Source: RMDB library OK1LIB, as collected in RNAgym.
An RNA of 177 nucleotides, treated with DMS and 2A3 and read out base by base.
RNA sequence: GGGAACGACUCGAGUAGAGUCGAAAAUCGAGUUGGUUGCUCGCUUGAUACCGCCGGAUGUCAAGAAGGAGUCGCUGGCUCAAGAGUGACCGAAGCUCAGUUGCGGUAGCACCCGCCGUACGUGCUGCCACGGUAGCUAUUUCGAUAGCUACCGUGGAAAAGAAACAACAACAACAAC
Reactivity to DMS in 0.01 (KOAc 150mM, MgCl2 10mM, bicine 150mM(pH8.5), 24C), signal-to-noise 3, nucleotides 027 to 126: u030c060g000a020g010u040u030g000g000u000u010g000c010u010c010g020c020u010u010g000a010u000a020c040c100g000c110c090g000g000a300u010g000u010c000a020a000g000a080a080g020g010a030g000u000c090g000c130u020g000g000c010u000c000a070a060g020a030g040u000g010a010c000c000g000a130a130g010c000u010c010a110g010u000u000g000c080g000g010u000a030g000c050a010c020c030c050g030c070c110g000u030a060c240g000u000g010c000u000g010
Reactivity to 2A3 in 0.01 (KOAc 150mM, MgCl2 10mM, bicine 150mM(pH8.5), 24C), signal-to-noise 7, nucleotides 027 to 126: u110c040g000a000g020u030u040g040g000u020u060g010c000u000c010g060c010u000u010g000a010u010a040c030c080g160c070c060g110g060a150u040g010u030c000a020a010g030a060a070g260g020a020g010u060c070g070c300u150g020g000c000u000c030a000a020g040a000g040u070g020a030c020c020g080a100a010g020c000u000c040a080g040u170u090g050c010g000g020u020a020g030c010a060c000c000c000g010c020c030g080u100a090c070g030u040g000c020u030g040
For 2A3 the reverse transcriptase was SuperScript II with manganese. The RNA was probed in 150 mM KOAc, 10 mM MgCl2 and 150 mM bicine (pH 8.5) at 24 C.